[RMDB]
RNA sequence: GGGAACGACUCGAGUAGAGUCGAAAAGCGUAGGAGAGAGGGCCGCGGUGCUCUGGAGUAGAGGCUUCUUGCUUCGAAACACCAUCGAUCGUCCCUUCUUCUUUUACCUUCUCCUGGCUCUUCGAGUGAGACGCGACCGGUGGCAUCACCUCUCGGUGUUCCUAGGUAAGUUCGCUUACCUAGGAACAAAAGAAACAACAACAACAAC
Reactivity to 2A3 in 0.01 (KOAc 150mM, MgCl2 10mM, bicine 150mM(pH8.5), 24C), signal-to-noise 3, nucleotides 027 to 156: g080c080g020u000a000g040g000a000g000a020g000a010g000g010g020c010c000g050c020g020g020u010g010c000u000c000u010g020g000a000g000u000a010g000a010g010g000c020u230u100c110u300u300g000c000u000u000c010g020a010a000a010c000a020c110c000a000u010c010g100a300u020c000g000u010c000c000c000u000u020c010u020u000c000u000u000u010u020a010c000c000u010u010c040u030c030c070u080g000g010c000u010c000u040u040c010g000a020g000u060g030a100g010a050c050g010c030g090a040c010c020g000g010u020g020g040c090a130u130c030a090c030c000u030c010u040c040g030g040u040